[RMDB]
RNA sequence: GGGAACGACUCGAGUAGAGUCGAAAAUACAAUAGCGUAGGGAACCAAGCUAAGAGGUUGGAAGUCCAACGGUAGAGGGCUUGGUUCGCAGCUGCACUAGAAGAGGUCCCACUCCCUACGCCGCAAAGAUACCCUUGGGUUUCGACCCAAGGGUAUCAAAAGAAACAACAACAACAAC
Reactivity to DMS in 0.01 (KOAc 150mM, MgCl2 10mM, bicine 150mM(pH8.5), 24C), signal-to-noise 2, nucleotides 027 to 126: u010a120c190a120a100u010a080g000c000g020u000a000g000g000g000a030a100c020c010a000a000g000c000u010a070a110g000a170g020g030u000u000g010g000a270a140g040u000c000c000a000a000c020g030g010u000a110g010a130g030g000g000c000u000u000g000g020u000u000c010g000c140a070g020c060u000g000c060a050c050u010a070g010a040a060g000a080g020g020u000c010c010c010a170c090u010c020c000c000u010a030c050g020c000c190g000c300a050a080a070
Reactivity to 2A3 in 0.01 (KOAc 150mM, MgCl2 10mM, bicine 150mM(pH8.5), 24C), signal-to-noise 2, nucleotides 027 to 126: u230a020c060a060a080u100a070g010c000g000u010a000g020g000g000a000a000c000c010a000a000g000c010u050a090a080g050a070g170g040u040u040g050g020a230a190g130u160c010c020a000a000c000g050g030u130a100g020a090g140g060g000c010u010u010g000g000u000u000c020g000c000a000g030c030u130g020c120a090c070u130a040g050a130a000g000a090g000g000u000c010c020c000a020c020u000c000c000c000u000a000c000g040c030c000g090c050a170a170a010